[RMDB]
An RNA of 207 nucleotides, treated with 2A3 and read out base by base. High 2A3 reactivity points to a flexible backbone, as in loops and unpaired stretches. Values cover nucleotides 27 to 156. 2A3 adducts were read by reverse transcription with SuperScript II with manganese.
RNA sequence: GGGAACGACUCGAGUAGAGUCGAAAAACGAGGUACGCCUCGAAAAUAUGACCGGUGACAUAGCCUCUAGCACACAGAGGUCGCGUGGGUUCAACUCCCCCCCUUUUCCGAGGGUAUCGGAAACCAAAAAACACAAUUUGGUUCGCCAAAUUGUGAAGAAUAACCCCAUCUUCGGAUGGGGUUAUUCAAAAGAAACAACAACAACAAC
Reactivity to 2A3 in 0.01 (KOAc 150mM, MgCl2 10mM, bicine 150mM(pH8.5), 24C), signal-to-noise 1, nucleotides 027 to 156: a000c000g010a000g000g000u000a030c130g020c000c000u000c000g060a140a080a010a030u210a140u110g010a010c010c010g020g020u080g020a110c020a050u090a010g010c020c020u030c020u030a070g070c100a030c020a000c020a210g000a000g000g000u000c010g000c000g030u210g020g100g000u140u270c060a030a100c060u140c000c000c000c000c000c000c000u100u050u000u000c000c000g000a010g000g000g000u060a020u000c000g010g020a000a000a000c030c030a000a090a000a000a150a000c000a000c000a010a010u000u000u000g010g010u040u030c130g040c100c010a060a000a000u000u010g000u030g010a010a000